[RMDB]
RNA sequence: GGGAACGACUCGAGUAGAGUCGAAAAAGCCUAGUCUCGAACUCCUGACCUCAAGUGAUCCGCCCACCUCGGCCUCCCAAAGUGCUGGGAUUACAGGGGACUCACACUUUGUAACAACCUGAAACAACGUGAUGCAUUUCCCUUUGGGUCUUACCUGAAUUUCUGUUAACUUCGGUUAACAGAAAUUAAAAGAAACAACAACAACAAC
Reactivity to 2A3 in 0.01 (KOAc 150mM, MgCl2 10mM, bicine 150mM(pH8.5), 24C), signal-to-noise 2, nucleotides 027 to 156: a010g040c030c010u010a040g010u020c010u040c030g060a100a050c010u030c020c010u040g070a090c030c020u070c100a100a040g020u020g060a060u010c060c050g000c020c030c010a050c020c030u030c040g010g000c010c010u010c010c030c000a010a080a000g070u070g040c060u030g010g000g020a030u020u120a050c040a010g020g000g040g020a030c010u050c010a010c010a000c010u010u060u070g030u080a130a070c080a060a060c040c060u110g030a200a080a000c030a030a010c070g040u020g040a110u040g000c030a020u000u020u100c000c000c000u020u050u040g020g000g010u030c010u040u030a070c000c020u040g030
Reactivity to DMS in 0.01 (KOAc 150mM, MgCl2 10mM, bicine 150mM(pH8.5), 24C), signal-to-noise 1, nucleotides 027 to 156: a070g020c030c020u000a100g020u000c010u010c020g000a090a070c020u000c010c020u010g010a100c030c020u000c040a020a100g020u000g000a050u000c010c020g000c020c030c020a030c010c000u010c050g000g000c000c030u010c010c010c010a020a100a120g020u010g000c040u000g000g000g000a160u000u000a050c050a080g010g020g020g020a110c090u000c000a090c000a050c040u000u000u010g020u010a060a130c070a060a140c040c020u000g010a180a130a050c030a020a050c050g020u000g010a110u000g010c040a130u000u010u000c000c020c030u000u000u010g020g010g000u010c060u000u000a080c030c030u000g010

Annotation: The record gives the reactivity of an RNA of 207 nucleotides to 2A3 and DMS. DMS (dimethyl sulfate) methylates the pairing face of unpaired adenines and cytosines. Conditions: 150 mM KOAc, 10 mM MgCl2 and 150 mM bicine (pH 8.5), 24 C. The DMS profile rests on 3,814 reads.